[RMDB]
Background
This 207-nucleotide RNA was probed chemically with DMS and 2A3. DMS adducts were read by reverse transcription with MarathonRT. It was measured as part of the RMDB library M2RFPK. For 2A3 the reverse transcriptase was SuperScript II with manganese.
RNA sequence: GGGAACGACUCGAGUAGAGUCGAAAAUCCACUAUGAAUCUAGUCACUAAAUAAACACAAUUAGCUACUGUGUGUAAUAGUGAGUGUUGAUAACACAAAAUAAUAGUAUAGUUUUGGAACAUUAUACGCGCCCUUGCUCCGUUCGCGGAGCAAGGAAGCUUAAUUGUCCGUUCGCGGACAAUUAAGCAAAAGAAACAACAACAACAAC
Reactivity to DMS in 0.01 (KOAc 150mM, MgCl2 10mM, bicine 150mM(pH8.5), 24C), signal-to-noise 2, nucleotides 027 to 156: u000c060c010a140c080u010a070u000g000a130a100u010c040u000a150g030u000c000a030c010u010a020a020a110u010a110a190a040c000a020c020a010a070u010u000a180g010c070u010a050c020u000g010u000g000u010g010u000a160a300u000a000g010u000g000a070g040u020g010u000u020g010a120u010a050a130c050a070c030a070a050a040a100u000a080a230u000a110g020u000a100u010a070g010u010u000u000u000g020g000a130a140c100a030u000u000a050u000a020c010g030c120g000c090c000c000u000u010g010c000u000c010c000g030u010u020c300g070c040g010g020a000g000c000a020a000g010g000a000a030
Reactivity to 2A3 in 0.01 (KOAc 150mM, MgCl2 10mM, bicine 150mM(pH8.5), 24C), signal-to-noise 4, nucleotides 027 to 156: u010c000c010a020c060u160a170u250g120a130a050u060c070u090a050g110u040c020a000c000u010a040a020a060u050a000a030a010c000a000c010a040a090u130u100a090g050c070u140a080c050u030g010u000g010u000g000u010a020a040u000a020g000u010g010a020g020u010g020u030u050g100a160u240a290a020c030a010c030a020a110a050a030u250a050a090u090a100g020u020a020u020a050g040u030u020u160u200g120g020a080a030c020a020u070u060a030u050a060c030g040c020g040c060c000c000u000u000g000c000u000c000c000g010u020u020c060g000c020g060g000a000g010c000a000a000g010g000a000a000